Source information: Structure probing data (2A3 and DMS) for a 177-nucleotide construct. For 2A3 the reverse transcriptase was SuperScript II with manganese. The reactions ran in a buffer of 150 mM KOAc, 10 mM MgCl2 and 150 mM bicine (pH 8.5), at 24 C.
RNA sequence: GGGAACGACUCGAGUAGAGUCGAAAAUCCUGAAUGAUUUUUUUCUGCAGAUAGGGGCUUAGGAUAAUGAUUUGUGCUUUAUUGGGGCAGAUUAGUCACAGUGUCACUACUGUCUCUCAAUGUGCCCGUAGUGUCAGAAGUUCGCUUCUGACACUACAAAAGAAACAACAACAACAAC
Reactivity to 2A3 in 0.01 (KOAc 150mM, MgCl2 10mM, bicine 150mM(pH8.5), 24C), signal-to-noise 1, nucleotides 027 to 126: u000c000c040u010g080a040a140u070g020a100u040u050u120u000u060u080u010c000u070g020c050a010g070a090u040a080g040g000g000g000c000u040u030a030g010g130a050u050a130a040u060g040a120u090u040u070g020u040g030c000u100u050u050a070u190u150g010g000g000g070c000a010g000a140u020u000a000g020u020c020a000c000a070g100u070g020u110c050a030c120u140a010c020u020g030u000c000u000c000u020c030a010a040u020g030u040g140c010c030c040
Reactivity to DMS in 0.01 (KOAc 150mM, MgCl2 10mM, bicine 150mM(pH8.5), 24C), signal-to-noise 2, nucleotides 027 to 126: u000c010c010u010g000a090a110u030g020a000u000u000u000u000u000u010u000c070u020g010c070a070g020a090u010a060g030g010g010g020c040u010u010a050g000g010a060u010a050a100u000g020a090u000u020u010g010u000g010c030u020u000u010a110u020u020g000g010g020g010c000a020g010a020u000u000a070g010u000c080a030c000a010g000u000g010u010c300a100c240u010a020c020u000g010u010c050u000c000u000c140a030a020u010g010u000g000c000c000c020